This 207-nucleotide RNA was probed chemically with 2A3 and DMS. The reactions ran in a buffer of 150 mM KOAc, 10 mM MgCl2 and 150 mM bicine (pH 8.5), at 24 C. 2A3 adducts were read by reverse transcription with SuperScript II with manganese. 2A3 is a SHAPE reagent: it acylates the 2'-hydroxyl of flexible nucleotides of all four kinds. The 2A3 profile rests on 5,148 reads.
RNA sequence: GGGAACGACUCGAGUAGAGUCGAAAACCAAAUGCUUCGGCAUUUGGAAAAAGCGUACUACCACUAAGGAACGAGGAUCUACACAAUCUUCCCAAAUAGGAACUGUGUAGGGAGUUCUGAUGGUGGUAUCGCAAAAAGUAUCUGUUCGCAGAUACAAGUUAUGCAAUGUGUUCGCACAUUGCAUAACAAAAGAAACAACAACAACAAC
Reactivity to 2A3 in 0.01 (KOAc 150mM, MgCl2 10mM, bicine 150mM(pH8.5), 24C), signal-to-noise 5, nucleotides 027 to 156: c000c000a000a000a000u020g010c020u040u100c230g180g000c010a010u000u000u040g010g110a080a100a020a040a000g030c030g030u080a090c050u010a000c010c000a010c010u040a030a070g040g000a000a000c010g040a150g070g000a010u000c000u000a000c000a000c000a040a090u040c070u060u040c050c020c060a170a300a200u300a130g010g000a020a010c020u010g000u010g000u000a010g000g000g000a010g000u020u000c010u020g060a140u300g000g000u000g000g000u000a000u050c000g000c000a010a110a030a020a000g000u000a000u000c000u010g080u060u110c300g020c120a000g000a000u000a010c010a010a010
Reactivity to DMS in 0.01 (KOAc 150mM, MgCl2 10mM, bicine 150mM(pH8.5), 24C), signal-to-noise 2, nucleotides 027 to 156: c020c000a000a000a000u000g000c000u000u010c300g080g000c000a010u010u030u010g000g010a030a050a090a110a150g010c020g020u010a090c050u000a020c000c000a040c050u000a190a300g000g000a020a020c010g030a120g030g010a070u000c010u000a020c000a020c020a030a050u010c030u010u000c000c000c060a020a250a200u010a050g040g000a060a030c050u000g020u000g010u000a010g000g000g010a070g020u000u000c030u000g010a080u000g000g010u000g000g000u000a030u000c010g070c030a090a080a100a110a130g020u000a010u000c000u020g010u000u010c300g020c010a010g010a050u000a010c000a040a210